[RMDB]
RNA sequence: GGGAACGACUCGAGUAGAGUCGAAAACUGACUUGACUCUCUCUUCUCUUCGGAGGAUUGGGAGGAUAGGAUGGGAUUGUGAGGACUUUUCUUGCCAGUGUAUUACGUAUACACAACAAAGACUCUGGUAAUGCUAGUAGUUCGCUACUAGCAUUACAAAAGAAACAACAACAACAAC
Reactivity to 2A3 in 0.01 (KOAc 150mM, MgCl2 10mM, bicine 150mM(pH8.5), 24C), signal-to-noise 8, nucleotides 027 to 126: c010u040g080a020c000u030u040g040a020c000u000c000u000c000u000c000u010u000c010u000c000u020u040c190g130g000a010g000g000a010u000u020g000g010g000a020g000g000a010u020a010g040g010a040u090g080g000g030a110u080u130g070u070g100a030g010g050a090c020u050u050u050u030c050u070u080g050c080c060a070g000u010g010u010a010u010u070a070c160g090u180a010u000a020c010a000c000a050a070c040a010a090a020g040a020c010u020c030u100g050
Reactivity to DMS in 0.01 (KOAc 150mM, MgCl2 10mM, bicine 150mM(pH8.5), 24C), signal-to-noise 8, nucleotides 027 to 126: c030u010g020a290c020u000u000g000a300c000u000c000u010c020u000c030u000u010c000u000c000u000u030c180g010g010a000g010g000a010u000u010g010g000g000a010g000g000a130u000a010g010g000a180u020g010g000g010a160u010u000g010u010g000a060g010g000a150c060u010u000u000u010c040u000u000g010c100c110a130g010u000g000u000a010u000u030a100c280g020u020a060u010a020c020a000c020a100a080c170a060a040a060g010a180c090u020c040u020g000
About this RNA:
This 177-nucleotide RNA was probed chemically with 2A3 and DMS.